[RMDB]
RNA sequence: GGGAACGACUCGAGUAGAGUCGAAAAAAAAAAGAUAUGGAUUGUCAGAAUGUAUGGCUAUGAUGACCACGGUCGGAAACGACCGUGCAAGUAGCCGAAGUUCUUGGAUUUAUCCUAAGUCAAAAAACCUAACUAGUAUGUUCGCAUACUAGUUAGGAAAAGAAACAACAACAACAAC
Reactivity to DMS in 0.01 (KOAc 150mM, MgCl2 10mM, bicine 150mM(pH8.5), 24C), signal-to-noise 3, nucleotides 027 to 126: a010a030a060a070a050a060g000a030u010a300u010g010g010a010u000u010g010u000c020a020g000a020a010u000g000u020a240u020g000g000c000u000a000u000g020a060u020g000a090c300c010a010c000g000g000u000c000g010g000a130a050a170c030g010a020c020c010g000u000g010c010a020a090g000u000a010g010c000c000g030a060a200g000u000u000c000u010u010g010g020a010u000u010u010a020u000c000c000u000a070a120g010u010c010a000a060a050a110a050a060
Reactivity to 2A3 in 0.01 (KOAc 150mM, MgCl2 10mM, bicine 150mM(pH8.5), 24C), signal-to-noise 3, nucleotides 027 to 126: a010a000a000a000a000a010g070a040u130a060u070g020g000a010u020u010g000u020c000a000g000a080a070u300g190u210a040u300g000g000c000u000a000u020g120a160u070g010a070c000c040a000c000g020g020u020c010g020g000a080a090a050c040g010a000c000c010g010u000g000c000a050a110g010u010a000g000c000c000g010a020a010g010u010u020c000u000u130g180g010a030u300u160u060a000u000c000c000u020a150a010g060u040c020a020a020a040a160a030a090